[RMDB]
RNA sequence: GGGAACGACUCGAGUAGAGUCGAAAAGAUAUGGAGACGCUGGGUUGCUAUAAUCUUCUGUCGGAAACGACAGAAGGUAGCAAUCCAGAUGUCUCCUAAGUCAAACGGUGACCUUCGGGUCACCGAAGUCAGAAUAGAACUUCGGUUCUAUUCUGACAAAAGAAACAACAACAACAAC
Reactivity to 2A3 in 0.01 (KOAc 150mM, MgCl2 10mM, bicine 150mM(pH8.5), 24C), signal-to-noise 2, nucleotides 027 to 126: g020a010u080a040u130g000g000a010g000a000c000g040c040u010g000g000g040u010u010g000c010u050a100u070a300a300u130c010u030u000c000u010g010u010c010g030g000a070a100a080c020g000a010c000a000g010a010a000g000g010u030a010g050c010a040a010u010c050c000a000g000a000u010g000u000c000u000c000c000u010a030a000g010u010c060a020a130a050c010g000g010u000g000a000c000c000u020u130c300g120g010g000u010c000a000c000c000g000a010a000
Reactivity to DMS in 0.01 (KOAc 150mM, MgCl2 10mM, bicine 150mM(pH8.5), 24C), signal-to-noise 2, nucleotides 027 to 126: g000a030u010a300u000g000g020a010g010a020c000g000c010u000g000g000g010u000u000g010c000u000a060u000a300a160u030c000u000u000c000u000g010u000c010g010g000a100a120a240c000g010a000c000a020g010a000a000g040g010u020a010g000c010a020a000u010c000c000a010g000a030u010g010u000c000u000c000c000u000a010a110g000u000c030a140a130a270c030g000g020u000g000a020c000c000u010u030c260g010g030g000u000c010a000c010c010g010a060a040